[RMDB]
RNA sequence: GGGAACGACUCGAGUAGAGUCGAAAAGAUGGAGGGUCGGGCCUCGGACACCUCCUAUAAGAUGUAACUAUUACGAGGCCAUUAAUGGCGUUUUCGCCUAGGUGCACGCCGGCGUGCGUGACACCGUAAGACUUAAUGAAUAACACGCCGGAUACAAGGGUAUCAUUUAUUUCGAUAAAUGAUACCCAAAAGAAACAACAACAACAAC
Reactivity to 2A3 in 0.01 (KOAc 150mM, MgCl2 10mM, bicine 150mM(pH8.5), 24C), signal-to-noise 2, nucleotides 027 to 156: g090a010u070g000g000a000g000g000g000u010c020g010g000g030c000c000u010c000g010g000a000c030a110c040c030u050c010c030u060a110u020a000a030g030a010u270g040u100a010a100c020u030a130u210u020a020c000g000a000g020g040c000c000a000u010u040a080a100u090g000g000c010g050u110u040u210u280c040g040c000c000u000a070g000g000u000g000c010a000c000g020c020c000g000g020c000g020u060g000c000g000u000g030a070c000a000c000c000g000u000a030a020g000a060c010u050u090a060a040u180g110a130a030u100a060a030c000a000c000g010c040c010g030g010a150u210a160c070a150a090
Reactivity to DMS in 0.01 (KOAc 150mM, MgCl2 10mM, bicine 150mM(pH8.5), 24C), signal-to-noise 2, nucleotides 027 to 156: g000a140u000g000g030a030g000g020g050u000c030g020g010g000c000c010u000c000g020g010a040c000a090c000c000u000c070c030u010a100u000a070a060g040a120u000g000u010a120a130c080u000a200u020u010a080c020g000a030g040g010c020c020a220u010u000a020a060u000g020g000c000g010u000u000u000u000c020g050c010c020u000a080g030g000u000g010c040a040c050g010c020c020g000g010c000g070u020g030c010g010u000g020a110c020a080c010c030g010u000a040a100g010a090c090u000u010a070a140u000g000a180a080u000a120a060c030a020c000g010c000c000g020g000a170u000a080c090a070a230